Source: RMDB library OK2TST, as collected in RNAgym. An RNA of 177 nucleotides, treated with DMS and 2A3 and read out base by base. DMS adducts were read by reverse transcription with MarathonRT. The reactions ran in a buffer of 150 mM KOAc, 10 mM MgCl2 and 150 mM bicine (pH 8.5), at 24 C.
RNA sequence: GGGAACGACUCGAGUAGAGUCGAAAAACAAAUCUGGAGGGAUUUGCAGCGGAAGUAGUAAGACUGCAAAUGGGAACAGCUAUUCUCAUCUCUUUCUAGACGCAGCAGGCAAGUUCGACACAGUUUGCUCUUAUCGGGAUUUCGAUCCCGAUAAGAGAAAAGAAACAACAACAACAAC
Reactivity to DMS in 0.01 (KOAc 150mM, MgCl2 10mM, bicine 150mM(pH8.5), 24C), signal-to-noise 1, nucleotides 027 to 126: a110c030a040a030a070u020c030u000g000g000a170g000g000g020a070u000u020u000g000c000a040g000c030g010g030a110a160g000u000a080g000u010a090a040g010a080c050u000g000c110a020a020a020u000g000g000g000a010a050c150a140g000c110u000a250u000u000c020u010c000a040u000c120u000c040u000u000u000c020u000a140g000a090c140g000c050a080g000c030a110g010g010c040a000a010g000u010u000c020g000a090c050a130c050a070g040u000u000u000g020
Reactivity to 2A3 in 0.01 (KOAc 150mM, MgCl2 10mM, bicine 150mM(pH8.5), 24C), signal-to-noise 1, nucleotides 027 to 126: a000c020a000a080a020u050c040u040g030g000a050g030g020g060a000u070u040u000g020c040a000g020c020g090g050a200a030g070u090a010g000u030a160a000g120a080c040u000g000c040a000a110a040u050g000g000g060a050a040c010a070g140c040u120a140u090u000c000u030c010a080u050c060u000c000u000u050u000c000u020a020g000a090c050g000c020a000g040c000a010g060g050c010a020a080g010u030u050c030g070a010c050a000c010a110g020u060u120u100g010